[RMDB]
RNA sequence: GGGAACGACUCGAGUAGAGUCGAAAACAAAUUUAGAACGAGUUAAGUUUACUUCUAAGUGUAAUGGACCGUUUUCACCAGCUGAGAUAAAUGGUAAUGAGAUUUGAGUUUGUGAUACACCUGAUAAACGAGGUAAACUAUUCGUAGUUUACCUCGUAAAAGAAACAACAACAACAAC
Reactivity to DMS in 0.01 (KOAc 150mM, MgCl2 10mM, bicine 150mM(pH8.5), 24C), signal-to-noise 5, nucleotides 027 to 126: c020a050a050a050u000u000u000a030g010a030a030c050g000a290g010u000u010a070a200g010u000u000u000a070c070u000u000c040u000a070a070g010u000g000u010a100a070u010g000g000a070c140c100g010u000u010u000u000c080a050c030c050a100g020c080u000g010a050g000a050u010a040a040a030u010g010g030u010a020a040u000g000a210g000a070u000u000u000g000a040g010u000u000u000g000u010g000a120u000a080c160a090c020c010u000g010a090u000a040a080
Reactivity to 2A3 in 0.01 (KOAc 150mM, MgCl2 10mM, bicine 150mM(pH8.5), 24C), signal-to-noise 4, nucleotides 027 to 126: c010a000a070a030u060u120u100a060g030a040a000c020g010a010g070u040u050a110a010g010u030u070u090a060c040u060u050c020u070a070a070g020u040g060u110a070a080u060g050g020a060c030c070g050u090u000u050u030c050a050c030c010a020g040c040u040g030a010g010a090u070a080a080a020u080g140g030u070a030a060u050g030a040g020a060u000u070u010g030a050g010u000u030u060g010u010g000a020u040a080c070a040c030c010u020g070a140u140a180a140
Background: This 177-nucleotide RNA was probed chemically with DMS and 2A3. For DMS, 5,330 sequencing reads were counted.